[RMDB]
RNA sequence: GGGAACGACUCGAGUAGAGUCGAAAACAAUACGACCCUGUCUCACUGGAUCAAACCGCCAAAGCGCAUCUGGCCAUGCUGCAAAGAGGCCCAAGCGCACAGCCGUACACGCUCGCUCCGGGGGCGCGUCGGUAUGACAGUAAUAACGCGCUGGUGGCUAGCUAAAUCAGUUCGCUGAUUUAGCUAGAAAAGAAACAACAACAACAAC
Reactivity to DMS in 0.01 (KOAc 150mM, MgCl2 10mM, bicine 150mM(pH8.5), 24C), signal-to-noise 2, nucleotides 027 to 156: c120a100a190u010a100c040g000a110c030c040c010u010g000u010c060u010c090a110c060u010g020g020a140u000c070a090a090a110c050c010g090c020c030a060a090a070g010c000g040c030a120u010c040u010g020g010c030c040a090u010g020c030u010g050c000a070a100a130g020a140g000g010c000c000c030a070a100g020c060g000c060a120c070a090g020c010c020g010u020a090c040a040c040g000c000u010c000g010c070u000c120c130g010g000g010g010g020c030g020c010g000u000c010g010g000u000a020u000g040a090c030a100g020u000a060a070u000a070a100c030g030c020g030c010u010g030g050u000g000g000
Reactivity to 2A3 in 0.01 (KOAc 150mM, MgCl2 10mM, bicine 150mM(pH8.5), 24C), signal-to-noise 5, nucleotides 027 to 156: c040a020a100u170a160c110g060a080c020c010c030u050g090u080c050u040c050a130c030u070g030g070a100u090c070a090a080a120c010c020g000c010c030a180a130a030g000c020g000c010a030u050c060u050g010g000c040c000a030u130g030c020u030g030c050a080a100a070g120a100g050g040c010c010c010a100a030g030c010g010c020a030c010a050g000c020c010g070u140a020c030a010c040g000c010u010c020g140c070u030c130c140g170g000g000g020g000c030g000c020g040u070c020g000g000u060a110u040g020a020c030a000g030u060a070a130u070a150a010c090g010c000g000c010u020g010g010u010g000g000

Background: This 207-nucleotide RNA was probed chemically with DMS and 2A3. For 2A3, 3,483 sequencing reads were counted. For DMS the reverse transcriptase was MarathonRT. Conditions: 150 mM KOAc, 10 mM MgCl2 and 150 mM bicine (pH 8.5), 24 C.